[RMDB]
RNA sequence: GGGAACGACUCGAGUAGAGUCGAAAAGGGGUCAAAGAGAUGACAGCCGUAAGAGGUGGUACUGAAGCCUCCACGGUACCACUACCCACCUUACGGAACUACUGUCAUGUCUUUGACGGAGGCACCCAAAACAGCUCAAAGUUCGCUUUGAGCUGAAGAAACGAAGAAGAUUCGUCUUCUUCGUUUCAAAAGAAACAACAACAACAAC
Reactivity to DMS in 0.01 (KOAc 150mM, MgCl2 10mM, bicine 150mM(pH8.5), 24C), signal-to-noise 2, nucleotides 027 to 156: g010g000g010g050u000c030a000a010a010g000a040g010a040u000g000a020c000a060g030c000c000g010u000a020a000g020a300g020g000u010g020g020u000a010c050u000g000a030a070g010c000c010u010c010c000a300c070g020g020u020a030c020c000a030c000u000a010c060c020c090a300c070c010u000u000a080c000g020g020a090a060c060u010a300c010u000g010u000c010a020u010g010u000c030u000u000u010g000a030c020g040g020a020g010g050c010a050c000c050c000a070a070a050a300c010a030g030c010u000c000a000a000a050g020u000u020c300g030c020u000u000u000g020a050g010c020u000g020a040a080
Reactivity to 2A3 in 0.01 (KOAc 150mM, MgCl2 10mM, bicine 150mM(pH8.5), 24C), signal-to-noise 4, nucleotides 027 to 156: g040g010g010g010u010c000a010a010a000g010a000g000a000u010g000a000c000a000g020c000c010g000u000a010a000g000a000g000g010u000g000g000u000a000c010u030g050a160a030g000c000c000u010c010c000a010c010g000g010u000a000c000c000a000c000u040a050c040c070c010a060c010c000u010u000a000c010g040g110a000a030c150u300a020c010u040g000u000c000a000u010g070u000c000u000u000u000g010a010c020g000g000a000g000g010c000a020c000c000c000a020a100a020a030c000a000g000c000u010c000a020a000a000g010u090u150c190g080c180u000u000u000g000a000g000c000u000g000a010a020
The record gives the reactivity of an RNA of 207 nucleotides to DMS and 2A3.
For 2A3 the reverse transcriptase was SuperScript II with manganese.
The DMS profile rests on 3,044 reads.
For DMS the reverse transcriptase was MarathonRT.
Reactivities are given for positions 27 through 156.
Conditions: 150 mM KOAc, 10 mM MgCl2 and 150 mM bicine (pH 8.5), 24 C.